[RMDB]
Structure probing data (DMS and 2A3) for a 177-nucleotide construct. The RNA was probed in 150 mM KOAc, 10 mM MgCl2 and 150 mM bicine (pH 8.5) at 24 C. DMS adducts were read by reverse transcription with MarathonRT. Values are in units of 0.01, from 0 to 300, in steps of 10.
RNA sequence: GGGAACGACUCGAGUAGAGUCGAAAAAAAUGGGCAUUGACGUGCAAUAGAGGUGCCAAAUCGAUUUUUCUUCAAAACACAUCCUAAACGAUCCUGUAUUGAAGGGACCACCCCUCUCUUAAGUAUGUAUAAUUACGUUAUUCGUAACGUAAUUAUAAAAAGAAACAACAACAACAAC
Reactivity to DMS in 0.01 (KOAc 150mM, MgCl2 10mM, bicine 150mM(pH8.5), 24C), signal-to-noise 9, nucleotides 027 to 126: a040a070a070u010g010g010g010c030a050u000u000g010a150c150g020u010g010c110a090a080u000a080g010a180g010g020u000g000c060c070a040a070a080u000c090g010a060u000u000u000u000u000c020u000u000c030a020a020a080a030c050a030c240a030u000c010c030u000a040a060a110c190g000a030u000c090c080u000g010u000a080u000u000g000a030a030g010g000g000a060c070c030a150c030c020c010c050u000c040u000c040u000u010a060a120g010u010a050u010g000
Reactivity to 2A3 in 0.01 (KOAc 150mM, MgCl2 10mM, bicine 150mM(pH8.5), 24C), signal-to-noise 6, nucleotides 027 to 126: a000a000a030u130g020g000g000c040a040u040u080g080a070c050g050u100g060c020a020a050u070a150g060a020g040g020u050g020c020c020a040a030a040u100c070g040a060u050u050u020u040u050c000u050u030c010a020a040a040a020c040a010c000a050u040c020c020u130a090a090a060c050g020a040u040c010c020u060g000u070a060u040u060g020a020a010g000g000g010a010c000c010a050c010c010c020c010u030c000u000c010u080u080a120a030g060u080a120u200g070